This 207-nucleotide RNA was probed chemically with DMS and 2A3.
The DMS profile rests on 2,179 reads.
The RNA was probed in 150 mM KOAc, 10 mM MgCl2 and 150 mM bicine (pH 8.5) at 24 C.
For DMS the reverse transcriptase was MarathonRT.
For 2A3 the reverse transcriptase was SuperScript II with manganese.

[RMDB]
RNA sequence: GGGAACGACUCGAGUAGAGUCGAAAACGUUGUCAUCGACAACACCCUAUGCAUUCAUGCUCUGUAAGGAUGCGCCGACAGGUGAGCAAGCCCGAGUUGCCCAGACCUGAAAUGCAACACUUUAGAGAAAACCCGAAGCAGUUCGCUGCUUCGGGAAUCUUUGUUCUAGGUUCGCCUAGAACAAAGAAAAAGAAACAACAACAACAAC
Reactivity to DMS in 0.01 (KOAc 150mM, MgCl2 10mM, bicine 150mM(pH8.5), 24C), signal-to-noise 1, nucleotides 027 to 156: c090g030u000u010g000u030c020a180u010c060g020a090c010a030a040c020a100c000c000c030u010a090u000g070c020a120u020u000c040a210u000g050c020u000c050u000g050u000a200a120g020g020a070u000g050c030g030c050c040g010a140c100a080g010g070u000g000a070g030c050a140a150g020c070c010c090g010a030g030u000u000g000c000c000c010a100g020a070c030c010u000g000a060a100a090u010g000c100a020a110c000a110c020u000u000u010a110g000a160g000a060a060a090a180c000c020c000g000a010a030g010c000a050g030u000u020c250g020c030u000g000c000u000u010c000g000g000g000a000a010
Reactivity to 2A3 in 0.01 (KOAc 150mM, MgCl2 10mM, bicine 150mM(pH8.5), 24C), signal-to-noise 2, nucleotides 027 to 156: c070g000u000u000g010u020c130a280u130c300g030a010c000a000a000c000a060c000c000c010u050a070u110g000c020a030u030u010c030a040u170g030c050u010c000u030g040u030a030a000g030g010a020u030g010c010g030c010c010g070a130c030a070g020g000u010g030a050g000c050a030a020g020c040c010c010g110a050g040u060u070g050c010c010c010a020g000a070c010c000u050g020a120a070a020u100g000c030a000a080c000a070c110u130u180u190a100g010a000g000a070a070a040a030c000c000c010g000a000a000g000c000a000g020u060u080c140g020c120u010g010c000u000u010c020g020g010g000a000a000